[RMDB]
RNA sequence: GGGAACGACUCGAGUAGAGUCGAAAAUGUGCGUGAUGGCAAAAUGGACUUGGCUGCAGACCUCCAGUACAAUGUCAUCCCCCUGAUUCAGGACCGCAUUCGGUCGUUGAAGGAGGACAUUGAAAGAAAAUCCUCCGUCGUUCGCGACGGAGGAUUUAAAAGAAACAACAACAACAAC
Reactivity to 2A3 in 0.01 (KOAc 150mM, MgCl2 10mM, bicine 150mM(pH8.5), 24C), signal-to-noise 1, nucleotides 027 to 126: u150g050u040g060c060g000u110g000a000u000g000g000c040a050a000a130a300u060g100g120a000c000u170u070g000g080c030u050g000c090a040g000a100c000c000u000c020c020a030g000u130a020c090a060a100u050g040u090c000a040u050c000c000c000c000c000u000g000a110u000u140c030a030g000g120a000c000c000g000c130a030u150u250c130g020g000u000c000g030u140u120g000a020a000g040g000a000g010g020a040c050a020u040u000g020a120a120a000g180a000
Reactivity to DMS in 0.01 (KOAc 150mM, MgCl2 10mM, bicine 150mM(pH8.5), 24C), signal-to-noise 2, nucleotides 027 to 126: u000g000u050g000c080g000u000g000a070u010g000g000c030a020a020a080a150u020g000g000a030c140u020u010g000g000c020u050g070c200a120g040a220c020c030u000c050c010a130g000u040a090c040a070a060u000g000u000c050a070u000c010c000c010c040c100u000g000a100u000u000c010a000g000g000a000c000c010g000c300a230u050u030c010g000g020u010c000g000u000u040g000a030a040g000g000a060g000g000a010c010a030u010u010g000a180a060a130g010a020
An RNA of 177 nucleotides, treated with 2A3 and DMS and read out base by base. Values cover nucleotides 27 to 126. Values are in units of 0.01, from 0 to 300, in steps of 10. The reactions ran in a buffer of 150 mM KOAc, 10 mM MgCl2 and 150 mM bicine (pH 8.5), at 24 C.